[RMDB]
RNA sequence: GGGAACGACUCGAGUAGAGUCGAAAAUCGUUCGUCCCCCCAGUGGUUGGACGGGGUCGUCACAGCGGGCAUUCUAAGUCCCGCGGGCCACAAAAGGCAGUGCCGCGGAACUUCUUGGCCCAAACGGGGUCCUUUAUACUUUCGAGUAUAAAGGACCAAAAGAAACAACAACAACAAC
Reactivity to 2A3 in 0.01 (KOAc 150mM, MgCl2 10mM, bicine 150mM(pH8.5), 24C), signal-to-noise 5, nucleotides 027 to 126: u050c010g020u040u010c010g090u070c010c000c000c000c000c010a050g050u160g170g080u240u090g040g020a050c090g020g000g020g020u070c020g010u040c030a020c040a140g090c100g000g010g020c010a030u130u010c030u120a060a000g000u010c010c000c000g000c000g000g020g000c100c000a040c060a030a210a030a020g140g010c070a050g100u050g120c000c000g000c010g030g000a010a010c000u060u000c020u090u120g070g000c000c000c000a050a020a010c080g040g010
Reactivity to DMS in 0.01 (KOAc 150mM, MgCl2 10mM, bicine 150mM(pH8.5), 24C), signal-to-noise 3, nucleotides 027 to 126: u040c030g020u000u010c000g010u000c000c030c010c000c040c070a190g000u050g010g010u030u020g000g000a100c080g000g020g000g020u010c060g000u010c090a090c100a090g020c180g010g000g040c000a080u030u030c100u000a050a010g010u020c020c000c000g000c000g000g010g000c030c020a060c130a060a070a160a100g000g030c040a140g010u020g030c020c010g030c000g000g010a070a020c020u000u000c060u020u020g020g000c010c000c000a030a060a080c160g000g030
An RNA of 177 nucleotides, treated with 2A3 and DMS and read out base by base.
The 2A3 profile rests on 3,780 reads.
The reactions ran in a buffer of 150 mM KOAc, 10 mM MgCl2 and 150 mM bicine (pH 8.5), at 24 C.
For 2A3 the reverse transcriptase was SuperScript II with manganese.
It was measured as part of the RMDB library OK1LIB.